[RMDB]
Description
An RNA of 177 nucleotides, treated with 2A3 and DMS and read out base by base. 2A3 is a SHAPE reagent: it acylates the 2'-hydroxyl of flexible nucleotides of all four kinds.

RNA sequence: GGGAACGACUCGAGUAGAGUCGAAAAGGGGAUCCGUACGCCGAAGCGCACCACAUUCGGCCGCUCGGUCGCCCACACGACGGACCCGAUGAACCAGAGAAUAUCCUUGUUCUCUGUCCGAAUCACCGAGCCAUAUUUACUUCGGUAAAUAUGGCUCAAAAGAAACAACAACAACAAC
Reactivity to 2A3 in 0.01 (KOAc 150mM, MgCl2 10mM, bicine 150mM(pH8.5), 24C), signal-to-noise 5, nucleotides 027 to 126: g020g020g010g010a080u070c020c000g030u060a030c040g020c030c010g050a140a030g050c050g030c030a050c040c010a090c020a160u110u070c010g010g000c000c000g010c030u010c010g000g040u050c020g080c020c030c000a030c010a010c000g120a010c010g010g000a010c000c040c020g010a080u140g020a010a040c030c020a010g020a000g040a120a050u170a060u250c060c080u080u150g020u000u010c000u000c000u000g040u010c030c010g100a050a070u110c040a020c060c080
Reactivity to DMS in 0.01 (KOAc 150mM, MgCl2 10mM, bicine 150mM(pH8.5), 24C), signal-to-noise 3, nucleotides 027 to 126: g020g000g050g000a030u010c000c000g000u020a100c160g010c040c010g000a060a020g030c090g060c080a140c000c010a040c200a120u050u020c040g020g000c300c090g000c090u010c060g000g060u000c110g040c030c020c020a100c170a050c150g010a010c030g010g000a110c010c030c060g000a050u010g000a130a090c220c020a000g000a010g000a010a000u000a020u040c200c100u020u000g010u010u000c000u000c000u000g000u020c050c030g000a180a060u020c110a080c140c100

Record summary: For DMS the reverse transcriptase was MarathonRT. For 2A3, 4,603 sequencing reads were counted. Source: RMDB library OK1LIB, as collected in RNAgym.